[RMDB]
RNA sequence: GGGAACGACUCGAGUAGAGUCGAAAAGAUAUGGAAGGCAUCACUCUCAUUAUUGUGCCAGAUACUGUGAUCGGAAACGAUCACUGUAUCGGUAAUACAAUAAUGAGAGUGAGUGCCUUCCUAAGUCCUUCCUAAGAUUGUUCGCAAUCUUAGGAAGAAAAGAAACAACAACAACAAC
Reactivity to 2A3 in 0.01 (KOAc 150mM, MgCl2 10mM, bicine 150mM(pH8.5), 24C), signal-to-noise 1, nucleotides 027 to 126: g070a030u110a050u230g000g000a010a010g010g000c010a020u040c000a040c000u000c000u000c010a010u000u010a010u000u010g020u010g030c020c070a040g010a000u000a000c020u030g000u010g020a000u000c010g050g020a060a130a060c010g000a000u000c010a000c040u010g010u010a000u000c000g010g000u080a120a060u290a070c000a000a010u010a030a010u000g000a000g010a000g000u000g000a000g000u000g000c010c000u000u000c010c000u000a000a010g010u010c000
Reactivity to DMS in 0.01 (KOAc 150mM, MgCl2 10mM, bicine 150mM(pH8.5), 24C), signal-to-noise 4, nucleotides 027 to 126: g010a110u010a300u010g010g000a020a000g020g020c000a100u000c010a000c000u010c000u000c000a010u000u000a000u000u000g030u000g010c030c010a260g040a020u000a000c000u000g010u010g000a010u000c010g000g000a120a100a260c010g010a000u000c000a010c000u000g000u000a000u000c000g000g020u000a100a110u010a300c000a020a000u000a010a000u000g000a010g000a020g020u000g000a000g020u010g030c010c010u000u000c000c000u000a020a080g010u010c060
Chemical mapping of a 177-nucleotide RNA with 2A3 and DMS. 2A3 adducts were read by reverse transcription with SuperScript II with manganese. For DMS the reverse transcriptase was MarathonRT. 2A3 is a SHAPE reagent: it acylates the 2'-hydroxyl of flexible nucleotides of all four kinds.